[RMDB]
RNA sequence: GGGAACGACUCGAGUAGAGUCGAAAAGAGCUGGAAGACGGCACAGGCGUCGUGUCUGCCGCCGGCCUCACCGAGGAUCACAUCCAGCUCCUCACCUGUGCGCACCUCAACGGCUGCCUCGACGAGGGCAGGCAUUUGCAUUCGUGCAAAUGCCUGCAAAAGAAACAACAACAACAAC
Reactivity to 2A3 in 0.01 (KOAc 150mM, MgCl2 10mM, bicine 150mM(pH8.5), 24C), signal-to-noise 1, nucleotides 027 to 126: g000a010g000c010u010g000g000a050a000g150a040c020g000g000c000a000c010a050g000g010c010g030u250c100g090u280g030u170c020u030g020c030c100g010c010c000g060g010c000c010u000c010a300c050c150g000a010g020g020a100u130c070a010c000a160u040c020c030a000g000c000u040c010c000u010c000a040c010c040u040g040u040g080c040g000c030a060c000c000u070c070a160a000c070g000g000c070u030g020c030c010u050c020g050a050c070g060a070g070g080
Reactivity to DMS in 0.01 (KOAc 150mM, MgCl2 10mM, bicine 150mM(pH8.5), 24C), signal-to-noise 1, nucleotides 027 to 126: g000a070g020c000u010g000g010a000a090g000a150c010g010g050c000a160c040a110g020g000c000g030u000c280g000u000g020u000c050u010g000c130c020g000c040c040g000g000c010c000u000c040a260c250c100g010a040g040g010a120u000c220a070c100a120u000c000c010a010g000c020u010c010c010u000c140a090c030c020u000g000u010g010c020g000c090a060c060c020u030c090a120a120c120g020g020c090u010g060c020c010u020c010g020a090c080g010a110g000g000